[RMDB]
RNA sequence: GGGAACGACUCGAGUAGAGUCGAAAAUUCUGCUUGCACUUGAAAACAACGAACCGUGAUGCGGGUCGUAAGGGAUUCCGGUAAGGAACACAGUCAAGUUCUUGCACGCGUCGGCGGCAGUGUUGCCCGCAGUGUGGCUGUUCGCAGCCACACUGCGAAAAGAAACAACAACAACAAC
Reactivity to DMS in 0.01 (KOAc 150mM, MgCl2 10mM, bicine 150mM(pH8.5), 24C), signal-to-noise 1, nucleotides 027 to 126: u000u000c040u000g030c000u000u020g010c030a010c030u000u020g000a060a050a080a180c150a160a000c020g030a010a010c000c000g040u010g000a110u040g010c000g020g000g000u000c000g000u030a010a110g010g030g000a250u020u000c000c000g020g050u030a140a150g000g010a000a000c090a070c120a220g020u000c060a020a040g000u000u000c020u000u000g000c070a120c080g000c100g000u000c090g010g000c080g020g000c020a010g060u000g030u000u000g010c050c010